The data come from the RNA Mapping Database (RMDB), library OK3TST. Structure probing data (DMS and 2A3) for a 207-nucleotide construct. 2A3 adducts were read by reverse transcription with SuperScript II with manganese. Conditions: 150 mM KOAc, 10 mM MgCl2 and 150 mM bicine (pH 8.5), 24 C. As a SHAPE reagent, 2A3 marks flexible, mostly unpaired nucleotides at the ribose 2'-OH. For 2A3, 1,804 sequencing reads were counted.
RNA sequence: GGGAACGACUCGAGUAGAGUCGAAAAAACAAGUUCUUGCUUGGCUGGUGCUAUCCCUCAAGCAAUCCUUGAAGGUGAAUACAAGUACGCUAGAAAGCUAAUUAGAAUGUUUAACGAGUUUGAGGAUUUUUACCUCGAAGUUCAACCUACUCCAAUGGUGUCAGCUAAUUUUCGAAUUAGCUGACACAAAAGAAACAACAACAACAAC
Reactivity to DMS in 0.01 (KOAc 150mM, MgCl2 10mM, bicine 150mM(pH8.5), 24C), signal-to-noise 1, nucleotides 027 to 156: a040a040c030a040a070g020u010u010c070u010u010g050c010u010u000g000g010c040u000g030g020u000g030c020u000a300u000c070c000c000u000c040a020a050g010c050a200a110u010c280c030u000u000g000a030a050g000g020u000g020a170a100u010a060c070a070a100g020u000a010c050g030c030u000a060g010a090a060a040g010c020u040a060a070u010u010a110g020a100a100u020g000u000u000u010a070a080c060g020a120g010u000u000u000g020a040g000g020a140u020u000u000u000u000a080c000c000u000c020g000a030a130g010u010u000c030a030a020c000c030u000a070c010u000c020c020a040a120u010g020
Reactivity to 2A3 in 0.01 (KOAc 150mM, MgCl2 10mM, bicine 150mM(pH8.5), 24C), signal-to-noise 3, nucleotides 027 to 156: a000a000c090a030a050g040u050u030c020u060u050g010c010u070u030g210g010c020u030g040g030u050g010c010u040a040u070c020c000c000u000c000a000a010g000c050a020a110u080c000c000u060u000g040a170a080g050g010u070g040a030a020u150a150c010a080a000g040u030a030c020g000c010u000a010g110a040a040a000g000c050u070a040a050u070u040a070g060a120a020u090g020u070u070u070a070a020c060g010a040g070u060u070u040g010a000g050g000a060u030u110u050u070u300a130c000c000u010c010g020a040a000g000u030u040c010a010a030c000c040u090a060c020u030c080c030a040a040u250g090